[RMDB]
RNA sequence: GGGAACGACUCGAGUAGAGUCGAAAAUGGCAUGGAUAGGGGCUAAGAGCCAGAUGUGGUCCUUUGUGGCAUGCUCAAGCUUUGUUCUGCAUUGAUGUUCAGAUUUUAAUACUCUGGGUAUCAAAACGAUGUCAUACGGAUUCGUCCGUAUGACAUCAAAAGAAACAACAACAACAAC
Reactivity to 2A3 in 0.01 (KOAc 150mM, MgCl2 10mM, bicine 150mM(pH8.5), 24C), signal-to-noise 3, nucleotides 027 to 126: u100g020g030c020a030u020g030g080a070u060a100g000g000g000g000c000u050a110a040g020a010g090c050c040a030g030a120u160g080u080g030g050u010c040c000u060u080u120g090u090g090g060c000a010u040g010c020u050c060a050a030g000c050u150u090u110g030u070u030c020u030g030c030a110u010u040g000a000u000g020u000u000c000a000g000a000u020u070u000u260a210a150u160a070c010u010c000u020g000g000g030u020a020u020c010a000a040a020a020c090
Reactivity to DMS in 0.01 (KOAc 150mM, MgCl2 10mM, bicine 150mM(pH8.5), 24C), signal-to-noise 3, nucleotides 027 to 126: u010g020g000c020a040u010g000g000a100u010a060g010g000g000g000c060u000a090a090g010a130g020c040c170a060g000a080u010g010u000g000g000u000c000c020u000u010u020g020u010g010g010c020a050u000g000c010u010c130a080a120g000c120u000u000u010g020u000u000c030u000g010c100a180u010u010g000a010u000g010u010u000c000a010g010a030u000u000u000u040a060a190u010a100c250u000c000u000g010g000g000u000a000u010c010a030a050a080a080c240

Structure probing data (2A3 and DMS) for a 177-nucleotide construct. For DMS, 3,394 sequencing reads were counted. For 2A3, 3,125 sequencing reads were counted. It was measured as part of the RMDB library OK2TST.